[RMDB]
RNA sequence: GGGAACGACUCGAGUAGAGUCGAAAAAUUUUUAGUUUUGGUAAAUUGCCAAUUUGCCGGAAAUUCUUAUUUUCGGUAAAUUACCAAUUUGCCGAAAACUUUCAUUUUUGGUAAUUUACCGAUUUGCUCAUUUACUGCUAUUCGUAGCAGUAAAUGAAAAAGAAACAACAACAACAAC
Reactivity to 2A3 in 0.01 (KOAc 150mM, MgCl2 10mM, bicine 150mM(pH8.5), 24C), signal-to-noise 7, nucleotides 027 to 126: a000u160u110u020u050u080a020g000u010u000u010u040g010g000u000a010a010a020u010u010g020c010c000a010a010u000u010u010g020c010c010g010g120a030a030a020u300u160c140u240u260a090u040u100u000u010c000g010g010u000a000a010a000u000u020a000c010c000a010a010u000u000u020g010c020c010g010a010a000a010a010c000u020u100u080c050a090u020u040u050u100u140g090g020u080a170a210u090u100u180a070c020c010g050a060u050u060u240g020c010
Reactivity to DMS in 0.01 (KOAc 150mM, MgCl2 10mM, bicine 150mM(pH8.5), 24C), signal-to-noise 2, nucleotides 027 to 126: a020u000u010u020u010u010a020g010u000u000u000u000g000g010u000a000a010a010u000u010g030c300c070a060a020u000u000u000g000c020c030g010g000a010a000a010u010u070c120u020u050a040u000u000u000u010c010g010g000u000a000a000a000u020u000a070c300c030a040a000u000u000u000g010c060c030g040a010a000a030a010c040u020u000u030c030a060u000u000u000u000u000g000g020u000a060a060u010u010u020a080c000c010g000a120u020u030u010g010c240